[RMDB]
RNA sequence: GGGAACGACUCGAGUAGAGUCGAAAACCGUAGGGACGAGUGGUCUGAUGACCCAACGGGUCCCGCAAGUUCGAAAGAGCUUGCGAAACCGUUGGCAAGGACCACGAGUCCCUAAACGGAAAAGCAAGAAACGCACGUUCGCGUGCGUUUCUUGCAAGUAUCAAACGUAGUUCGCUACGUUUGAUACAAAAGAAACAACAACAACAAC
Reactivity to DMS in 0.01 (KOAc 150mM, MgCl2 10mM, bicine 150mM(pH8.5), 24C), signal-to-noise 2, nucleotides 027 to 156: c000c000g040u000a030g010g000g030a000c010g000a300g030u010g020g020u000c000u000g030a070u000g010a060c300c020c010a020a000c020g020g000g000u010c060c050c030g050c000a000a000g020u000u010c000g010a170a150a220g000a010g010c010u000u000g060c000g040a030a020a040c010c000g020u000u000g000g000c010a070a080g010g030a010c020c010a010c020g000a160g010u000c000c000c000u000a000a020a060c020g000g000a050a080a200a200g000c030a010a000g000a000a040a030c000g000c000a030c000g020u000u010c270g030c030g030u000g010c000g010u010u000u000c000u000u000g000c000a010a010

Chemical mapping of a 207-nucleotide RNA with DMS.
For DMS the reverse transcriptase was MarathonRT.
The data come from the RNA Mapping Database (RMDB), library RNAMAK.